This 207-nucleotide RNA was probed chemically with 2A3 and DMS. The 2A3 profile rests on 4,857 reads. The RNA was probed in 150 mM KOAc, 10 mM MgCl2 and 150 mM bicine (pH 8.5) at 24 C. DMS adducts were read by reverse transcription with MarathonRT. Values are in units of 0.01, from 0 to 300, in steps of 10. For 2A3 the reverse transcriptase was SuperScript II with manganese.
RNA sequence: GGGAACGACUCGAGUAGAGUCGAAAAGUCCUCGUUUCGACGAGGACAAAAGCGUACUACUGAGGCCACGGGAGAUGUUGACGUCCCAAAUAGGACGUCAUCAUCGAAGAACGUGGAACUACCUCAGUAUCGCAAAACGGCCUACUUCGGUAGGCCGCAAAGUGUUUGUGUUCGCACAAACACUUUGAAAAGAAACAACAACAACAAC
Reactivity to 2A3 in 0.01 (KOAc 150mM, MgCl2 10mM, bicine 150mM(pH8.5), 24C), signal-to-noise 3, nucleotides 027 to 156: g000u000c000c000u000c000g010u010u070u130c200g120a020c010g000a000g000g010a000c010a000a020a000a000g020c020g080u110a060c040u000a010c000u040g010a010g000g010c010c000a000c000g030g000g020a080g000a020u010g010u010u000g000a000c010g020u010c020c010c050a100a270a080u270a040g010g000a000c000g010u000c000a000u000c000a000u010c000g020a040a020g040a020a000c010g000u010g000g020a020a020c070u140a040c000c000u000c000a000g000u000a000u040c000g000c000a060a050a000a010c010g000g000c000c000u000a000c000u040u030c100g090g000u020a000g000g000c000c000g000
Reactivity to DMS in 0.01 (KOAc 150mM, MgCl2 10mM, bicine 150mM(pH8.5), 24C), signal-to-noise 3, nucleotides 027 to 156: g020u000c000c000u000c020g020u000u000u000c220g050a050c000g000a020g010g020a000c010a010a020a060a160g020c020g040u000a090c180u000a010c020u000g010a030g040g000c010c010a000c000g000g000g010a260g010a020u000g010u000u000g000a030c000g030u000c010c000c010a060a130a190u010a060g020g020a020c000g020u000c000a000u000c010a020u010c000g010a100a130g000a110a150c030g040u000g000g020a030a040c040u010a300c000c000u000c000a050g000u000a010u000c020g010c030a060a030a070a180c000g000g040c000c000u000a000c010u000u010c300g050g020u000a020g010g020c010c000g020